The record gives the reactivity of an RNA of 177 nucleotides to 2A3 and DMS. The 2A3 profile rests on 1,112 reads. Reactivities are given for positions 27 through 126. For 2A3 the reverse transcriptase was SuperScript II with manganese. The reactions ran in a buffer of 150 mM KOAc, 10 mM MgCl2 and 150 mM bicine (pH 8.5), at 24 C. It was measured as part of the RMDB library OK1LIB.
RNA sequence: GGGAACGACUCGAGUAGAGUCGAAAAGGGGUUUGGGGAUAUCGUUUUGUGCUGGCCGAGACGCCAGGCCAGAGGAUUUUCGUUUAAGGGUCAGUACGGGGCGUUUGUGGUCAGACAUUGGCUAGGGUAGUCAGAGAGUUUUCGAACUCUCUGACUAAAAAGAAACAACAACAACAAC
Reactivity to 2A3 in 0.01 (KOAc 150mM, MgCl2 10mM, bicine 150mM(pH8.5), 24C), signal-to-noise 2, nucleotides 027 to 126: g000g000g070g000u110u120u050g130g010g000g020a070u080a100u130c100g110u020u000u200u060g060u010g180c000u000g000g000c010c000g010a030g000a000c010g000c030c020a070g070g000c030c060a100g000a020g090g030a010u040u140u130u030c140g070u000u010u110a050a070g070g010g010u030c040a010g000u060a050c060g010g080g070g020c010g000u020u010u010g050u060g010g000u010c030a000g010a060c060a060u030u010g040g040c050u050a050g000g000g060
Reactivity to DMS in 0.01 (KOAc 150mM, MgCl2 10mM, bicine 150mM(pH8.5), 24C), signal-to-noise 2, nucleotides 027 to 126: g020g000g010g020u030u000u000g000g000g000g000a130u010a030u010c150g000u000u010u030u000g010u020g000c010u000g000g000c000c000g020a090g010a060c030g000c000c010a140g000g010c020c000a090g010a250g030g000a060u030u000u040u040c190g000u000u010u030a050a130g000g010g020u000c000a030g020u040a090c150g020g000g000g010c020g000u000u000u000g000u020g010g010u010c020a050g000a040c040a090u000u000g000g000c150u020a070g000g000g000